[RMDB]
RNA sequence: GGGAACGACUCGAGUAGAGUCGAAAACGCUGGGAUCCUAAGCACCUCAGCAGGGAUGCUGAAGCGCGCACGGCUAAUCCCUGCUAGGGUGUAUGGAUCCUGUGCUGAAGCGCGCACGGCAACCGAAAGGUGCGAAAGGACCUAUUCGUAGGUCCAACAUCAUAGCCAUAUUCGUAUGGCUAUGAUGAAAAGAAACAACAACAACAAC
Reactivity to 2A3 in 0.01 (KOAc 150mM, MgCl2 10mM, bicine 150mM(pH8.5), 24C), signal-to-noise 7, nucleotides 027 to 156: c040g000c020u040g000g000g000a000u010c000c000u050a230a040g030c000a000c000c000u090c040a000g010c000a000g020g000g000a020u070g010c020u080g050a270a140g060c080g000c020g020c060a040c030g030g000c040u100a130a060u050c010c000c000u000g000c000u020a040g000g020g010u020g000u020a030u080g000g000a000u000c000c000u000g010u010g000c010u060g030a120a050g040c040g000c000g000c040a020c030g080g000c040a090a070c030c010g050a120a030a010g080g000u020g010c020g030a110a040a020g000g000a000c000c010u020a040u060u140c300g060u070a000g000g000u000c000c000a000a020
Reactivity to DMS in 0.01 (KOAc 150mM, MgCl2 10mM, bicine 150mM(pH8.5), 24C), signal-to-noise 3, nucleotides 027 to 156: c060g000c040u030g030g020g010a040u000c000c000u020a120a260g000c000a000c000c000u000c010a030g020c000a030g020g030g030a050u010g010c000u000g000a080a050g040c030g050c040g000c020a300c060g010g010c030u000a140a240u000c010c000c010u010g020c030u000a020g020g010g020u010g060u000a060u010g000g000a020u010c010c000u010g000u000g010c020u000g010a100a070g000c040g010c010g040c000a250c030g030g010c020a100a140c050c020g000a100a100a170g040g020u010g010c040g000a060a090a160g000g020a010c000c000u060a080u000u000c230g010u000a020g020g010u010c010c000a010a160

This 207-nucleotide RNA was probed chemically with 2A3 and DMS. The DMS profile rests on 6,933 reads. The reactions ran in a buffer of 150 mM KOAc, 10 mM MgCl2 and 150 mM bicine (pH 8.5), at 24 C. The data come from the RNA Mapping Database (RMDB), library RNAMAK.